[RMDB]
RNA sequence: GGGAACGACUCGAGUAGAGUCGAAAAGGUUUUUAGCAGGAUUAGCGCUAUUGACUUGAUCCUUGAUUUCAUUAAGCUUUUUAGCGGUGUAGCUGUUAAUAGCCUUAGUGAAAUUAUCCAACAUGUCUCUCCAUCUGUCAUUCGUGACAGAUGGAGAAAAAGAAACAACAACAACAAC
Reactivity to DMS in 0.01 (KOAc 150mM, MgCl2 10mM, bicine 150mM(pH8.5), 24C), signal-to-noise 2, nucleotides 027 to 126: g020g030u010u000u020u010u000a000g020c000a110g040g010a270u010u020a130g010c220g010c000u010a020u000u000g010a020c010u010u000g000a160u010c010c020u020u000g000a000u000u000u000c010a010u000u010a010a000g000c020u010u000u020u000u000a000g010c000g000g000u000g050u020a090g010c000u000g000u000u000a000a020u000a000g010c200c060u000u020a040g020u000g010a020a010a020u010u000a020u010c170c180a080a150c200a040u020g020u000c100
Reactivity to 2A3 in 0.01 (KOAc 150mM, MgCl2 10mM, bicine 150mM(pH8.5), 24C), signal-to-noise 2, nucleotides 027 to 126: g030g000u040u010u020u020u010a000g010c070a050g000g270a300u220u200a050g130c040g010c080u020a010u020u020g010a020c000u020u070g040a010u100c000c000u010u050g010a020u020u000u000c000a010u000u030a020a000g000c000u040u160u000u060u110a000g020c070g000g000u110g130u170a120g070c010u020g010u000u010a010a010u000a050g000c040c020u000u010a000g010u020g000a010a010a020u060u060a040u080c080c010a090a070c090a140u100g180u070c010
Conditions: 150 mM KOAc, 10 mM MgCl2 and 150 mM bicine (pH 8.5), 24 C. Chemical mapping of a 177-nucleotide RNA with DMS and 2A3. For 2A3 the reverse transcriptase was SuperScript II with manganese. It was measured as part of the RMDB library OK2TST.